Description: Source: RMDB library 15KLIB, as collected in RNAgym. The record gives the reactivity of an RNA of 170 nucleotides to 2A3 and DMS. DMS adducts were read by reverse transcription with MarathonRT. Values are in units of 0.01, from 0 to 300, in steps of 10. Conditions: 150 mM KOAc, 10 mM MgCl2 and 150 mM bicine (pH 8.5), 24 C.

RNA sequence: GGGAACGACUCGAGUAGAGUCGAAAACAACUGUUAUCUUGCCACUGCAUUGUUAACACUCCAACAAAUAGAGUUGAAGUUUAAUCCAUCUGCUCUACAAAGGGCUGGUGAAGCUGCUAACUUUUGUAAAGCCACACCUUCGGGUGUGGCAAAAGAAACAACAACAACAAC
Reactivity to 2A3 in 0.01 (KOAc 150mM, MgCl2 10mM, bicine 150mM(pH8.5), 24C), signal-to-noise 2, nucleotides 027 to 129: c020a030a000c010u010g000u090u000a100u110c090u150u210g020c000c090a120c020u050g000c050a000u070u010g030u010u070a110a020c060a010c030u000c010c000a020a040c020a000a270a090u240a000g100a000g030u000u020g060a000a000g000u030u110u050a090a050u020c020c000a000u000c000u060g020c000u030c000u000a050c030a080a200a080g010g010g000c000u000g000g000u080g040a010a000g010c050u000g000c040u000a000a090c000u000u040u000u090g070u220a020a030a000
Reactivity to DMS in 0.01 (KOAc 150mM, MgCl2 10mM, bicine 150mM(pH8.5), 24C), signal-to-noise 3, nucleotides 027 to 129: c010a050a050c040u000g000u010u010a000u090c000u050u120g070c040c080a150c050u030g040c140a220u000u010g020u170u000a080a150c000a030c110u010c060c050a000a050c070a080a300a210u020a000g010a100g050u010u020g030a080a050g000u000u030u160a030a000u000c050c000a020u070c040u020g000c000u030c090u040a080c180a160a120a010g160g000g000c030u000g000g070u050g020a050a050g000c110u000g030c040u000a100a000c090u000u000u050u000g080u300a110a000a300